[RMDB]
RNA sequence: GGGAACGACUCGAGUAGAGUCGAAAAGAUAUGGACACUGCAGACUUUUGACGGAAAUCCUUCGGAAACGAAGGCAAUUCCGAUAAGUCUGGGUGUCCUAAGUCAAACACAACGUUCGCGUUGUGAACGUUCUGUAACUCUUCGGAGUUACAGAACGAAAAGAAACAACAACAACAAC
Reactivity to 2A3 in 0.01 (KOAc 150mM, MgCl2 10mM, bicine 150mM(pH8.5), 24C), signal-to-noise 3, nucleotides 027 to 126: g020a020u060a060u120g000g000a010c010a020c050u300g170c080a070g000a010c000u110u120u270u300g270a180c070g020g100a060a090a060u300c000c010u000u000c010g020g050a080a080a040c000g000a000a000g000g000c000a040a060u030u000c010c010g020a030u070a030a010g000u000c000u000g010g010g000u010g010u000c000c000u010a010a000g000u020c020a050a030a020c010a000c000a020a040c000g040u090u090c300g000c000g230u000u020g000u000g000a090a010
Reactivity to DMS in 0.01 (KOAc 150mM, MgCl2 10mM, bicine 150mM(pH8.5), 24C), signal-to-noise 2, nucleotides 027 to 126: g000a050u000a300u000g000g000a010c000a020c000u000g020c010a020g000a030c000u000u000u010u020g040a270c250g000g000a030a040a080u000c000c010u000u000c020g000g030a120a050a190c000g010a040a000g010g030c160a060a110u000u000c000c000g000a170u000a040a000g020u000c000u000g000g000g010u000g000u000c000c000u000a000a040g000u010c040a130a100a180c020a030c010a000a020c010g020u010u010c250g040c040g030u030u000g000u020g000a060a130

This 177-nucleotide RNA was probed chemically with 2A3 and DMS. The data come from the RNA Mapping Database (RMDB), library TTRDES. Reactivities are given for positions 27 through 126. The RNA was probed in 150 mM KOAc, 10 mM MgCl2 and 150 mM bicine (pH 8.5) at 24 C. 2A3 adducts were read by reverse transcription with SuperScript II with manganese.